Structure probing data (2A3) for a 177-nucleotide construct. The 2A3 profile rests on 253 reads. It was measured as part of the RMDB library RFM100. The RNA was probed in 150 mM KOAc, 10 mM MgCl2 and 150 mM bicine (pH 8.5) at 24 C.
RNA sequence: GGGAACGACUCGAGUAGAGUCGAAAAAGAAAGUCCGUACCUGCUCGGCCCGGAGUGAGGAGGAGCCCCCGGCAGAGGAGGUGACCCCAGACGAGGUGAUCCAGGCGGAGGAGGUGACCGAGACUAAUGUACCGUUCGACUUCGGUCGAACGGUACAAAAAGAAACAACAACAACAAC
Reactivity to 2A3 in 0.01 (KOAc 150mM, MgCl2 10mM, bicine 150mM(pH8.5), 24C), signal-to-noise 1, nucleotides 027 to 126: a040g110a110a090a000g070u090c000c000g070u140a000c000c020u000g300c000u000c000g160g150c000c000c000g260g000a110g090u070g140a090g080g080a000g000g000a000g090c000c000c000c000c000g050g160c180a110g110a110g000g000a110g000g000u050g090a300c180c000c070c000a000g070a140c230g090a110g090g000u250g000a000u000c000c000a000g120g000c010g010g210a000g000g070a000g000g000u000g050a000c100c100g070a070g000a070c000u000a070a070